Annotation:
An RNA of 177 nucleotides, treated with DMS and 2A3 and read out base by base. Reactivities are given for positions 27 through 126. DMS adducts were read by reverse transcription with MarathonRT. It was measured as part of the RMDB library TTRDEL.

[RMDB]
RNA sequence: GGGAACGACUCGAGUAGAGUCGAAAAGAUAUGGAUUGUGGGAGAUCGAUAUCGGAAACGAUAUCAGAUCGAAGAACACACUGUCCUAAGUCAAAGGCAUUAUAUCGCUUCGGCGAUAUAAUGCCAACCAAAUAGUUUUGUUCGCAAAACUAUUUGGAAAAGAAACAACAACAACAAC
Reactivity to DMS in 0.01 (KOAc 150mM, MgCl2 10mM, bicine 150mM(pH8.5), 24C), signal-to-noise 5, nucleotides 027 to 126: g000a020u000a140u010g000g000a050u000u000g010u010g000g000g000a110g010a010u000c010g010a010u000a000u000c000g020g000a050a020a090c000g010a020u000a000u000c000a050g030a000u000c010g010a130a120g010a090a210c070a020c000a030c300u010g000u010c000c000u000a020a100g000u000c020a070a080a120g000g010c010a000u010u000a000u000a000u000c000g010c010u000u000c240g020g020c000g010a010u000a000u000a010a000u000g010c000c000a010a030
Reactivity to 2A3 in 0.01 (KOAc 150mM, MgCl2 10mM, bicine 150mM(pH8.5), 24C), signal-to-noise 3, nucleotides 027 to 126: g010a010u040a020u100g010g000a010u060u020g000u020g010g000g030a100g010a010u010c000g010a010u000a000u010c000g020g040a040a020a000c010g000a000u010a010u010c110a070g010a000u020c020g040a090a020g020a010a010c040a010c020a020c150u170g060u030c000c010u010a080a010g020u020c050a080a100a120g010g010c000a000u000u000a000u000a000u000c000g000c000u070u100c300g130g000c000g000a000u010a000u000a010a000u010g020c000c000a000a000